RNA sequence: GGGAACGACUCGAGUAGAGUCGAAAAUAUGUGGAAGGAUGGUCAAUUCCAAAUGCUGGAUCUCCUUAAGUGGAUUAAGGUUUUGAAUGGGCCAUAAACUGGGCGGAAGGGUAAUUAUCAGCUUUGGUUAUAGGGAAUCCCUUUUUUCUCCUGUAACAUCAUUAACACGGUUCGCCGUGUUAAUGAUAAAAGAAACAACAACAACAAC
Reactivity to 2A3 in 0.01 (KOAc 150mM, MgCl2 10mM, bicine 150mM(pH8.5), 24C), signal-to-noise 3, nucleotides 027 to 156: u180a040u050g040u070g080g010a030a010g050g040a020u030g020g000u030c020a020a040u040u020c030c030a000a020a030u220g100c000u010g020g050a060u060c030u040c040c010u120u060a170a060g240u150g060g030a020u110u100a040a000g030g000u030u000u030u040g040a030a030u020g010g000g000c000c000a010u040a020a100a060c070u040g000g010g000c190g000g050a060a010g050g020g020u040a070a070u090u100a060u150c060a010g070c030u100u080u110g010g020u030u000a020u010a000g000g000g000a000a050u110c040c010c020u080u060u010u000u050u050c090u020c010c020u020g020u020a020a000c010
Reactivity to DMS in 0.01 (KOAc 150mM, MgCl2 10mM, bicine 150mM(pH8.5), 24C), signal-to-noise 2, nucleotides 027 to 156: u000a070u020g000u000g000g020a070a090g000g010a060u020g000g020u000c020a050a080u000u000c020c050a010a070a040u000g010c050u000g030g010a190u000c050u010c020c060u010u000a040a120g020u000g020g010a130u000u010a120a120g000g010u010u000u010u010g010a040a050u010g040g040g020c000c010a030u010a050a030a130c050u000g020g010g010c100g000g000a090a050g010g000g000u000a040a090u000u000a070u010c080a090g000c020u000u000u000g020g020u000u000a070u000a020g030g020g000a060a150u000c090c050c060u020u000u000u000u000u000c020u000c000c010u030g000u000a040a040c050